[RMDB]
RNA sequence: GGGAACGACUCGAGUAGAGUCGAAAACACGAAUGUGACAGGCAGGUGUGGGGCCAGGCUCUGUGAGGAGUGAAGGGGGGUCUGCCCUUGACGGGCUCAUGGUCUUGCAGGAAGGUGGACCAGUGACGAUGGUCAACUUAUUCGUAAGUUGACCAUCAAAAGAAACAACAACAACAAC
Reactivity to DMS in 0.01 (KOAc 150mM, MgCl2 10mM, bicine 150mM(pH8.5), 24C), signal-to-noise 4, nucleotides 027 to 126: c070a090c110g010a070a070u020g030u010g010a110c080a070g010g010c090a070g000g010u000g020u010g000g010g010g010c060c060a060g000g000c030u000c050u000g000u030g000a100g000g000a070g020u000g020a080a080g000g010g010g000g010g010u000c060u000g010c020c010c020u010u010g010a080c160g010g000g000c020u010c130a050u000g000g000u000c030u010u010g020c060a070g000g020a070a080g020g020u010g010g000a060c030c020a080g010u000g010a110c220
Reactivity to 2A3 in 0.01 (KOAc 150mM, MgCl2 10mM, bicine 150mM(pH8.5), 24C), signal-to-noise 3, nucleotides 027 to 126: c060a020c030g120a170a120u230g030u080g050a020c040a060g030g040c030a020g060g000u080g050u090g070g040g010g000c030c010a040g030g020c010u000c030u030g090u080g060a050g030g030a020g020u100g050a070a110g000g000g030g030g000g020u030c030u040g020c000c020c000u020u040g040a050c030g000g020g000c020u030c030a030u070g000g010u010c020u050u160g010c030a020g060g030a060a040g070g050u060g010g000a030c000c000a010g020u030g050a030c100